[RMDB]
RNA sequence: GGGAACGACUCGAGUAGAGUCGAAAAAUUAUCUUUCUGAUAGGUGGAACUGCAUCAGACUGUUCCAGUUACUUUCCUAAUACAUUGAUAAUCAUUAGGGAACUUGUAAACUGAAUAAGUAGCUAAUUUCUGUUAGUAUCAGUGAUACUAUUUGUGGCUGAAAGUCGAUUUUCGAAUCGACUUUCAGAAAAGAAACAACAACAACAAC
Reactivity to 2A3 in 0.01 (KOAc 150mM, MgCl2 10mM, bicine 150mM(pH8.5), 24C), signal-to-noise 1, nucleotides 027 to 156: a000u130u230a050u010c050u020u170u040c040u140g010a040u040a020g010g040u090g050g040a010a010c020u060g010c000a050u000c040a150g120a100c020u010g020u070u030c050c010a020g000u000u000a010c010u060u010u000c010c000u010a010a010u020a040c020a040u040u280g090a140u110a070a070u220c050a010u030u070a000g010g010g010a030a130c100u150u000g000u040a020a260a000c000u000g000a060a040u100a280a040g020u010a000g040c020u020a100a240u040u290u140c060u060g050u120u010a020g020u040a010u040c010a060g000u020g170a000u000a050c000u040a100u130u080u110g020u050g180g080